[RMDB]
RNA sequence: GGGAACGACUCGAGUAGAGUCGAAAAGCGAGCGAAGACAACGCAUCUGCGGCGCGAAAUAUGAAGGGGGAGAGCCCUUAUAGACCAGGUAGUACACGUUUGGUUAGGGGGCCUGCAUAUGGCCCCCGAGCAAAUGAAAUUUCGAUUUCAUUUGCUCAAAAGAAACAACAACAACAAC
Reactivity to DMS in 0.01 (KOAc 150mM, MgCl2 10mM, bicine 150mM(pH8.5), 24C), signal-to-noise 6, nucleotides 027 to 126: g020c050g010a090g020c020g010a100a080g000a070c180a100a130c150g000c070a140u010c030u010g000c050g020g010c050g030c040g000a050a060a110u020a090u020g000a110a090g010g000g010g010g000a190g000a160g020c010c020c020u000u010a040u010a080g000a090c040c010a040g000g010u000a080g000u010a080c100a040c120g000u010u010u010g010g000u000u010a160g000g000g010g000g010c000c000u000g010c270a120u030a070u000g010g020c000c000c000c000c000
Reactivity to 2A3 in 0.01 (KOAc 150mM, MgCl2 10mM, bicine 150mM(pH8.5), 24C), signal-to-noise 9, nucleotides 027 to 126: g060c040g020a010g030c020g040a110a050g060a060c060a090a040c090g020c030a110u030c040u110g020c010g080g010c020g000c020g060a040a070a010u300a120u210g140a080a070g000g000g000g030g020a120g050a050g110c000c000c020u040u060a140u070a040g030a010c010c010a000g030g020u030a040g060u050a060c050a020c100g030u050u080u070g070g010u050u090a100g000g000g000g000g000c000c000u070g030c070a110u100a070u260g010g000c000c000c000c000c000